[RMDB]
About this RNA: This 177-nucleotide RNA was probed chemically with DMS and 2A3.
RNA sequence: GGGAACGACUCGAGUAGAGUCGAAAAUGAUUCGCGAUAUUACGGACCAUAUAGAAGCUGAAAUUCAGGAUCGUUACAAUGGACCUGCAAAGAUUGAAGAUAUUCAGACUCUUGUCGAGCAUGGUCACGAUAGCCUGACGUUCGCGUCAGGCUAUCGAAAAGAAACAACAACAACAAC
Reactivity to DMS in 0.01 (KOAc 150mM, MgCl2 10mM, bicine 150mM(pH8.5), 24C), signal-to-noise 1, nucleotides 027 to 126: u000g020a050u000u000c020g060c000g000a070u000a130u000u000a110c020g000g030a070c010c000a030u010a090u000a150g000a060a130g000c000u000g000a050a080a290u020u000c000a090g010g040a020u000c020g070u000u020a180c080a110a090u030g010g020a060c060c000u020g000c050a020a060a190g000a030u020u000g010a030a040g010a050u000a170u000u020c170a110g000a070c160u000c010u010u000g000u000c030g010a300g000c130a040u000g000g000u000c040a140
Reactivity to 2A3 in 0.01 (KOAc 150mM, MgCl2 10mM, bicine 150mM(pH8.5), 24C), signal-to-noise 1, nucleotides 027 to 126: u100g010a010u030u050c050g020c070g090a000u060a020u190u110a110c050g050g000a050c020c050a000u040a000u040a190g180a140a040g000c010u000g050a030a060a080u050u000c000a020g060g070a020u000c000g040u130u060a080c050a030a000u140g000g000a020c000c000u020g030c070a100a080a050g050a040u050u130g040a060a000g030a020u050a090u130u110c040a070g020a150c010u000c000u000u050g070u040c020g000a030g000c020a110u240g000g040u020c090a020